[RMDB]
RNA sequence: GGGAACGACUCGAGUAGAGUCGAAAAGCCAGCGCCUGGUCCGCGAGGAACUGCGCGGCCCGACCGGCGAGCGCAACGAGCUGUUCUACGAAGGCCGCGGCAUCUUCGCCUGCGUCAGCCCGUGGAAGGCGUAGGAUUUAUUCGUAAAUCCUACGCCAAAAGAAACAACAACAACAAC
Reactivity to DMS in 0.01 (KOAc 150mM, MgCl2 10mM, bicine 150mM(pH8.5), 24C), signal-to-noise 3, nucleotides 027 to 126: g010c020c020a140g000c070g010c040c080u000g020g020u000c030c040g020c190g000a120g030g000a070a080c170u010g010c060g020c010g000g000c040c040c060g000a090c140c010g010g010c020g020a080g000c130g010c060a090a080c080g000a090g020c010u010g000u000u000c020u000a100c090g000a140a110g020g020c020c020g010c190g030g020c020a080u000c060u010u000c040g000c010c040u010g040c050g010u000c050a140g000c010c000c000g000u000g010g000a130a140
Reactivity to 2A3 in 0.01 (KOAc 150mM, MgCl2 10mM, bicine 150mM(pH8.5), 24C), signal-to-noise 2, nucleotides 027 to 126: g030c010c040a020g000c030g030c020c060u050g000g040u000c040c020g000c020g020a040g070g060a050a070c090u230g000c010g000c000g010g000c000c000c010g040a060c060c000g010g000c040g040a040g020c110g030c050a000a180c070g040a060g010c020u070g110u130u000c010u040a030c060g040a120a080g010g030c000c000g000c030g060g000c000a040u070c070u170u110c010g010c010c010u100g010c000g050u020c020a010g020c040c000c020g020u040g000g080a120a040